The data come from the RNA Mapping Database (RMDB), library M2PK50. This 177-nucleotide RNA was probed chemically with DMS and 2A3. For 2A3, 8,134 sequencing reads were counted.

RNA sequence: GGGAACGACUCGAGUAGAGUCGAAAACAUGGAUCGUUCGCGAUCCAUGGCAGGUGGUGGUGGGACCACCCGACCCAGGCUUUUGGCAUCCCAGCCUUUCCAAUCCAGCCUAUUUCGAUAGGCUGAAUUCUAAUAACAACUUCGGUUGUUAUUAGAAAAAAGAAACAACAACAACAAC
Reactivity to DMS in 0.01 (KOAc 150mM, MgCl2 10mM, bicine 150mM(pH8.5), 24C), signal-to-noise 6, nucleotides 027 to 126: c010a010u000g000g000a010u000c000g020u010u010c200g030c010g010a010u000c000c000a000u000g000g020c110a060g000g020u000g000g010u010g010g040u000g000g000g000a140c010c010a020c010c010c060g010a090c030c020c020a100g000g010c040u000u010u000u000g010g010c010a040u000c010c010c010a090g010c020c020u000u000u000c020c030a130a110u010c080c000a010g000c000c000u000a000u000u010u010c160g010a020u000a000g000g010c000u000g000a020a030
Reactivity to 2A3 in 0.01 (KOAc 150mM, MgCl2 10mM, bicine 150mM(pH8.5), 24C), signal-to-noise 5, nucleotides 027 to 126: c000a000u010g010g000a000u010c010g000u090u050c230g010c000g110a000u020c020c000a000u000g000g030c050a030g000g050u050g000g010u020g010g070u050g020g050g020a010c010c000a000c000c010c010g040a030c010c000c000a030g060g030c020u140u230u300u300g050g000c010a030u030c000c000c010a090g180c080c060u050u070u030c050c020a050a060u050c030c000a000g010c010c010u010a000u010u100u100c210g070a020u000a000g000g000c000u000g000a000a000